Chemical mapping of a 177-nucleotide RNA with DMS and 2A3. It was measured as part of the RMDB library M2PK90. Values cover nucleotides 27 to 126. The reactions ran in a buffer of 150 mM KOAc, 10 mM MgCl2 and 150 mM bicine (pH 8.5), at 24 C. For 2A3 the reverse transcriptase was SuperScript II with manganese.

RNA sequence: GGGAACGACUCGAGUAGAGUCGAAAAUGAAAAGUGCCUCGAAAUAAACUUGAAGAUCAAGAACAAGAUACAAACGGCAAGUAUCGUUCGAUCCAUGAAAUAAACGAGAGCACAAAGCCGAAAAAAACCUUUACUCUUACUUCGGUAAGAGUAAAGGAAAAGAAACAACAACAACAAC
Reactivity to DMS in 0.01 (KOAc 150mM, MgCl2 10mM, bicine 150mM(pH8.5), 24C), signal-to-noise 1, nucleotides 027 to 126: u000g010a050a180a120a230g010u000g040c000c000u010c040g040a020a170a060u000a080a150a020c010u000u010g000a190a090g010a000u010c060a080a080g060a000a040c050a190a210g010a020u000a000c030a060a110a060c110g010g000c150a090a130g000u010a010u000c000g000u000u000c000g010a000u000c010c020a010u000g000a010a030a000u000a040a070a040c000g000a000g000a080g010c020a000c010a010a020a120g010c000c030g000a000a000a040a020a090a090a080
Reactivity to 2A3 in 0.01 (KOAc 150mM, MgCl2 10mM, bicine 150mM(pH8.5), 24C), signal-to-noise 2, nucleotides 027 to 126: u090g030a090a040a060a040g000u000g040c000c000u000c000g000a300a300a130u030a050a010a000c010u030u050g060a120a030g020a050u010c080a120a000g020a010a000c060a130a060g000a010u010a010c000a010a190a000c060g160g010c080a120a110g020u020a000u000c010g000u020u010c000g010a000u000c000c020a030u040g030a300a300a020u040a020a000a000c010g010a010g000a020g000c000a010c000a010a000a000g020c000c000g070a090a020a000a000a000a020a030